The record gives the reactivity of an RNA of 177 nucleotides to 2A3 and DMS. The 2A3 profile rests on 11,101 reads.

RNA sequence: GGGAACGACUCGAGUAGAGUCGAAAAGAUAUGGAUGUGUCAGGACAUGAAGCGCUAUCGGAAACGAUAGCUUUCAACAGCCUGGACACAUCCUAAGUCAAAAGAUUAGGGGUUCGCCCCUAAUCAACUAAAGAUCCUAGUUCGCUAGGAUCUUUAGAAAAGAAACAACAACAACAAC
Reactivity to 2A3 in 0.01 (KOAc 150mM, MgCl2 10mM, bicine 150mM(pH8.5), 24C), signal-to-noise 4, nucleotides 027 to 126: g030a010u040a020u090g000g000a000u010g000u010g010u010c000a000g020g030a090c130a300u220g000a000a000g040c040g010c240u000a000u010c000g000g000a010a000a020c000g010a000u000a000g010c000u000u000u000c010a050a050c070a100g060c010c010u040g050g090a000c000a000c000a010u000c000c000u000a000a010g030u000c030a000a020a090a260g000a010u010u010a000g000g040g020g090u060u120c300g250c030c000c000c000u010a010a000u000c000a000a000
Reactivity to DMS in 0.01 (KOAc 150mM, MgCl2 10mM, bicine 150mM(pH8.5), 24C), signal-to-noise 6, nucleotides 027 to 126: g010a030u000a240u010g000g000a020u000g010u000g000u010c000a050g010g000a050c110a170u020g010a030a020g000c300g000c010u010a000u000c010g000g000a050a050a110c000g000a010u000a000g010c000u000u000u000c000a060a070c230a210g000c000c000u000g010g010a020c010a010c000a000u000c000c000u000a000a070g000u000c020a130a100a130a140g010a020u000u010a000g010g000g010g020u000u010c300g010c000c000c000c010u000a000a000u000c000a060a180
Conditions: 150 mM KOAc, 10 mM MgCl2 and 150 mM bicine (pH 8.5), 24 C. The data come from the RNA Mapping Database (RMDB), library TTRDES. DMS adducts were read by reverse transcription with MarathonRT.